[RMDB]
RNA sequence: GGGAACGACUCGAGUAGAGUCGAAAAACUAUUUGUUCUAUAGCAAACAAACCCGAAACACAGAAUAUAUUUGUUAUAUAUGCUUUGUGGGACACAGCUGUUAGGACGUGAGCCAUCAGGGUCCAAACGGAUGAGUCAGGUUCGCCUGACUCAUCCGAAAAGAAACAACAACAACAAC
Reactivity to 2A3 in 0.01 (KOAc 150mM, MgCl2 10mM, bicine 150mM(pH8.5), 24C), signal-to-noise 1, nucleotides 027 to 126: a000c060u050a060u050u030u140g130u110u000c000u010a230u000a000g010c030a000a170a060c070a030a160a100c000c000c000g140a060a010a000c040a030c030a000g110a070a000u090a000u000a000u010u140u000g160u300u120a010u000a000u010a000u010g110c030u000u090u010g130u100g000g000g000a000c030a000c000a100g050c000u060g200u060u100a030g000g000a030c000g100u170g000a000g000c000c000a000u010c000a090g060g000g000u020c000c150a060a010a000